Chemical mapping of a 177-nucleotide RNA with 2A3 and DMS. For 2A3 the reverse transcriptase was SuperScript II with manganese. The data come from the RNA Mapping Database (RMDB), libraries RFM100 and RFMREP. The RNA was probed in 150 mM KOAc, 10 mM MgCl2 and 150 mM bicine (pH 8.5) at 24 C.
RNA sequence: GGGAACGACUCGAGUAGAGUCGAAAAUUUAUUGCUUCGAUCAAUGCACUGAAAGUGACUACACCAGGAUUUGUUUUUAAGUUUUUGCUCUCAUCUAUAUGAUAAAGAUGAAAAUUAGCCUCUGAUGGGCAUAACAGGUAUUCGUACCUGUUAUGCCAAAAGAAACAACAACAACAAC
Reactivity to 2A3 in 0.01 (KOAc 150mM, MgCl2 10mM, bicine 150mM(pH8.5), 24C), signal-to-noise 1, nucleotides 027 to 126: u070u010u000a070u000u070g110c000u000u060c000g040a060u100c030a070a090u080g000c010a000c060u070g000a070a040a040g040u030g030a130c070u190a130c030a000c030c010a030g070g000a040u000u030u230g070u020u100u040u050u030a170a030g000u050u000u000u080u190g070c040u030c000u000c010a020u000c000u010a040u010a140u300g070a110u030a170a050a030g090a000u060g000a000a050a020a020u040u190a030g060c000c000u000c020u060g000a070u080g090
Reactivity to DMS in 0.01 (KOAc 150mM, MgCl2 10mM, bicine 150mM(pH8.5), 24C), signal-to-noise 1, nucleotides 027 to 126: u050u010u040a080u000u000g000c020u010u000c060g020a080u030c090a030a020u020g000c000a040c060u010g010a120a060a120g000u000g000a060c060u000a080c030a080c050c040a020g010g000a090u000u000u000g000u000u000u000u010u010a050a070g000u000u000u000u000u000g000c100u020c190u000c000a020u000c010u010a120u050a020u030g000a150u000a010a090a070g000a030u030g000a010a080a040a060u010u000a150g010c050c040u010c070u000g000a170u020g030